[RMDB]
This 177-nucleotide RNA was probed chemically with 2A3. 2A3 adducts were read by reverse transcription with SuperScript II with manganese. Source: RMDB library RFM100, as collected in RNAgym.
RNA sequence: GGGAACGACUCGAGUAGAGUCGAAAACACGCAGUUCGAACCGCGACUGCGUUCUUAUAACGCUUGGCUAUAAUAAACAUCUAUCUAUCCGUAGCGUCACAAUGUGUAAUUAGCCGACAUUUGGCGUGACGAUGCCUGUCUUCGGACAGGCAUCGUCAAAAGAAACAACAACAACAAC
Reactivity to 2A3 in 0.01 (KOAc 150mM, MgCl2 10mM, bicine 150mM(pH8.5), 24C), signal-to-noise 1, nucleotides 027 to 126: c120a000c000g000c030a000g000u020u010c000g000a140a000c090c010g000c020g070a000c060u030g000c020g000u000u000c000u000u250a170u030a030a000c060g100c110u050u300g030g000c100u140a000u130a160a110u090a070a190a010c120a240u060c060u020a070u000c030u010a020u010c100c000g000u070a040g020c000g040u000c000a000c000a050a140u000g000u000g000u000a070a250u020u000a000g000c000c010g060a040c040a080u080u070u020g000g000c000g020u020